[RMDB]
RNA sequence: GGGAACGACUCGAGUAGAGUCGAAAAGAACCCCCAAGCUUUCAACAGAGGAAGAGAGCAAGAUAGAGGAGCCCCCGUGACGCUGGCAGCAUCGCGGACUGGGAGAAGAGAGGCGAAGAAAAGAAGGGAACUUGGCCGUUCGCGGCCAAGAAAAGAAACAACAACAACAAC
Reactivity to DMS in 0.01 (KOAc 150mM, MgCl2 10mM, bicine 150mM(pH8.5), 24C), signal-to-noise 3, nucleotides 027 to 129: g000a180a180c080c000c050c050c090a040a130g020c060u010u050u000c040a000a170c000a120g020a010g000g040a060a110g040a080g000a020g010c110a100a050g030a010u010a000g010a060g030g000a020g040c080c060c000c000c020g040u000g000a020c160g000c000u000g000g000c130a060g030c080a040u020c020g020c100g030g050a160c050u000g000g030g050a140g020a040a020g050a130g000a030g010g070c100g100a060a020g010a090a040a090a000g000a050a000g070g030g000a000a020
Reactivity to 2A3 in 0.01 (KOAc 150mM, MgCl2 10mM, bicine 150mM(pH8.5), 24C), signal-to-noise 2, nucleotides 027 to 129: g040a020a070c000c030c010c000c050a030a100g030c050u100u190u150c080a160a120c000a060g060a010g060g010a000a030g030a000g000a000g030c000a000a000g070a120u120a030g000a000g010g020a040g040c010c000c010c040c000g030u030g010a010c000g000c050u010g100g030c000a010g030c020a050u030c000g000c000g040g000a020c070u060g020g020g000a170g020a030a000g110a030g030a050g010g000c020g020a000a000g060a000a070a030a010g050a000a040g000g000g050a020a040
This 170-nucleotide RNA was probed chemically with DMS and 2A3. It was measured as part of the RMDB library 15KLIB. The RNA was probed in 150 mM KOAc, 10 mM MgCl2 and 150 mM bicine (pH 8.5) at 24 C. For 2A3, 2,010 sequencing reads were counted.